[RMDB]
RNA sequence: GGGAACGACUCGAGUAGAGUCGAAAAUAGGCGAUAACAUUGAUGCGUUUUUUGAUGAGCUUGUAGAACAAUUAAAUCUAUAUAUGGAUAUAUUGCCAAAAGGCGAUCAAACAUUUGAUGAAAAGGCCUGACAGAUCUAAUUCGUUAGAUCUGUCAGAAAAGAAACAACAACAACAAC
Reactivity to DMS in 0.01 (KOAc 150mM, MgCl2 10mM, bicine 150mM(pH8.5), 24C), signal-to-noise 3, nucleotides 027 to 126: u050a070g010g010c020g020a100u020a080a080c050a030u000u000g000a010u000g010c180g020u000u020u040u020u020u000g000a040u000g000a180g020c010u000u000g020u030a120g000a210a220c020a010a000u010u010a050a120a040u000c000u000a070u050a210u040a110u060g000g010a030u000a200u040a020u000u010g010c050c060a050a160a180a020g010g000c000g000a040u000c020a020a050a090c060a050u010u000u010g010a030u010g020a060a030a100a070g000g000c050
Reactivity to 2A3 in 0.01 (KOAc 150mM, MgCl2 10mM, bicine 150mM(pH8.5), 24C), signal-to-noise 8, nucleotides 027 to 126: u170a030g030g020c040g060a040u060a150a020c010a040u010u040g020a000u050g080c130g120u020u050u020u050u090u080g060a080u020g040a040g050c030u040u030g050u110a090g120a300a020c020a020a010u080u120a170a110a060u020c040u040a110u020a100u060a070u300g010g000a000u010a000u010a010u070u030g010c010c000a020a080a050a030g010g000c020g010a010u000c020a010a010a040c010a020u030u050u190g040a030u010g020a030a060a030a020g040g010c010

Structure probing data (DMS and 2A3) for a 177-nucleotide construct. Source: RMDB library OK1LIB, as collected in RNAgym. For DMS, 5,519 sequencing reads were counted.